[RMDB]
RNA sequence: GGGAACGACUCGAGUAGAGUCGAAAAUACGCCACCGUGGUUUGGGUGACCAGCGCCUAUCUGCUGGCCUACGCGGUGCCAAUGCUGGUGGCCGGCCGGCUUGGCGACCGGUUCGGCCCGAAGAAUCCCUGUCCCAAUUAUUCGUAAUUGGGACAGGAAAAGAAACAACAACAACAAC
Reactivity to 2A3 in 0.01 (KOAc 150mM, MgCl2 10mM, bicine 150mM(pH8.5), 24C), signal-to-noise 3, nucleotides 027 to 126: u160a030c050g020c030c020a010c000c000g000u020g020g180u130u140u250g110g030g030u130g180a160c020c000a000g010c010g020c010c050u250a300u300c090u140g000c010u000g000g000c010c000u020a020c010g000c000g000g000u000g000c010c000a080a060u140g050c050u080g040g120u140g040g010c000c000g000g010c010c000g000g010c060u050u060g130g000c030g060a140c000c000g000g000u130u280c020g000g010c020c000c010g030a010a010g050a050a050u020c000
Reactivity to DMS in 0.01 (KOAc 150mM, MgCl2 10mM, bicine 150mM(pH8.5), 24C), signal-to-noise 3, nucleotides 027 to 126: u000a140c130g000c290c020a030c010c020g030u000g020g020u000u010u000g020g040g020u010g010a170c010c000a010g000c000g030c270c170u010a100u000c190u020g020c010u010g000g000c020c000u000a070c050g010c020g010g010u000g000c080c040a070a100u010g020c070u000g000g010u010g040g010c000c020g000g000c020c010g010g010c070u000u010g010g000c120g020a130c010c000g020g010u000u010c020g020g000c000c000c030g010a030a080g010a180a140u000c100
Structure probing data (2A3 and DMS) for a 177-nucleotide construct. For DMS, 2,461 sequencing reads were counted. Reactivities are given for positions 27 through 126.